[RMDB]
RNA sequence: GGGAACGACUCGAGUAGAGUCGAAAACGUCAACCGACAUUUGACCCCGUCAUGUGGGAGUUCCUUUGUUUUUUCCAACGGACAGGGACCUCCUGCCGCUUGAGGCAGUCUUAUAUGAUUGGAAACCGUCUAAUGACUUGUUCGCAGGUCGUUAGACAAAAGAAACAACAACAACAAC
Reactivity to 2A3 in 0.01 (KOAc 150mM, MgCl2 10mM, bicine 150mM(pH8.5), 24C), signal-to-noise 9, nucleotides 027 to 126: c050g040u040c030a070a070c080c060g110a040c060a080u070u060u100g050a040c000c010c000c020g090u080c050a070u110g020u090g040g010g000a020g010u020u020c000c000u090u180u180g030u020u030u010u010u060u060c050c030a070a030c060g010g010a010c010a010g000g000g010a010c000c020u030c000c000u010g000c000c010g080c070u070u180g040a110g010g010c010a010g010u010c010u060u110a150u040a050u150g190a290u030u060g030g010a060a040a040c060c050
Reactivity to DMS in 0.01 (KOAc 150mM, MgCl2 10mM, bicine 150mM(pH8.5), 24C), signal-to-noise 9, nucleotides 027 to 126: c140g010u010c020a080a110c180c130g000a040c040a070u010u010u010g000a130c050c030c010c030g010u020c100a040u020g010u020g000g000g000a050g010u000u000c000c000u000u020u030g020u000u000u000u010u020u030c070c100a050a070c130g000g000a020c030a030g000g000g000a020c060c020u000c030c000u000g010c010c050g010c190u020u040g010a230g010g020c010a060g000u020c060u020u030a080u020a050u020g000a080u000u010g010g000a070a100a140c230c140